[RMDB]
RNA sequence: GGGAACGACUCGAGUAGAGUCGAAAACGAGUGAAAUUAUUCAAGUGUCAAAAAAUAAUCUGAGCAUUUGCUAACAUUCACGUUUAGCAGUGUAGUCUGGAAGAAGUGAAGGAAUCAUGACCCACCAUGUUUCUGCCCCUAGCAAGGAUCCAAGGACUCAUGCCAUAUGGUUCGCCAUAUGGCAUGAAAAAGAAACAACAACAACAAC
Reactivity to DMS in 0.01 (KOAc 150mM, MgCl2 10mM, bicine 150mM(pH8.5), 24C), signal-to-noise 1, nucleotides 027 to 156: c060g000a100g050u000g030a100a020a120u010u000a070u000u000c030a080a080g030u000g030u020c040a010a000a130a070a130a140u000a050a090u000c050u000g010a240g020c020a050u010u000u010g030c090u010a040a040c020a220u000u000c220a080c080g040u000u030u000a040g010c020a010g030u000g030u000a070g020u000c040u020g020g030a070a080g010a100a050g070u000g040a080a050g040g000a060a050u020c020a030u000g010a230c060c000c020a060c060c020a070u010g000u000u000u000c030u000g000c000c000c030c000u010a050g020c020a020a030g000g020a060u000c000c010a060a110g010g010a070c120
Reactivity to 2A3 in 0.01 (KOAc 150mM, MgCl2 10mM, bicine 150mM(pH8.5), 24C), signal-to-noise 3, nucleotides 027 to 156: c050g020a040g020u090g060a090a060a150u160u150a150u190u120c090a140a060g040u060g030u090c080a100a110a100a070a050a030u140a070a040u050c130u110g030a040g030c010a020u080u100u130g020c020u010a020a030c020a040u170u300c120a080c180g030u050u030u100a010g000c000a000g000u020g010u020a040g090u010c050u040g040g020a060a000g040a060a020g010u090g110a040a030g040g000a010a040u050c020a020u070g030a070c000c010c010a000c030c040a070u010g000u000u060u000c010u060g030c000c020c000c000u010a010g010c080a080a010g020g000a020u050c040c000a020a040g150g020a020c020